This 177-nucleotide RNA was probed chemically with DMS and 2A3.
The RNA was probed in 150 mM KOAc, 10 mM MgCl2 and 150 mM bicine (pH 8.5) at 24 C.
2A3 adducts were read by reverse transcription with SuperScript II with manganese.
DMS (dimethyl sulfate) methylates the pairing face of unpaired adenines and cytosines.
[RMDB]
RNA sequence: GGGAACGACUCGAGUAGAGUCGAAAAGCAAAGCACAUGAAGCACAUGAAGCACAUGAAGCACAUGAAGCACAUGAUGCACAUGAAGCACAUGAAGCACAUGAAGCACAUGAAGCACAUGAAAAAAAGUACUUGUAUGGGUUCGCCCAUACAAGUACAAAAGAAACAACAACAACAAC
Reactivity to DMS in 0.01 (KOAc 150mM, MgCl2 10mM, bicine 150mM(pH8.5), 24C), signal-to-noise 2, nucleotides 027 to 126: g020c150a050a060a040g000c040a110c010a060u010g010a200a050g000c060a280c020a080u000g000a200a120g040c040a200c000a040u000g000a000a130g020c010a130c040a030u020g020a130a060g060c100a180c000a030u000g010a020u000g000c000a230c020a000u000g000a020a190g000c040a200c020a000u000g020a130a100g000c040a100c000a060u000g000a080a130g130c000a240c020a000u000g010a080a100g040c000a070c120a030u000g020a000a000a050a180a030a170a100
Reactivity to 2A3 in 0.01 (KOAc 150mM, MgCl2 10mM, bicine 150mM(pH8.5), 24C), signal-to-noise 2, nucleotides 027 to 126: g050c020a070a030a040g040c000a040c010a080u070g070a160a010g020c020a010c020a050u030g050a140a030g060c010a020c000a020u040g070a100a000g040c000a000c000a060u030g060a150a010g080c030a000c000a060u110g150a280u000g040c020a020c000a060u060g090a120a020g050c020a020c010a040u030g030a150a030g010c010a000c000a030u010g030a120a020g020c000a000c000a010u030g050a080a040g000c020a040c010a090u110g060a040a080a030a010a000a000a040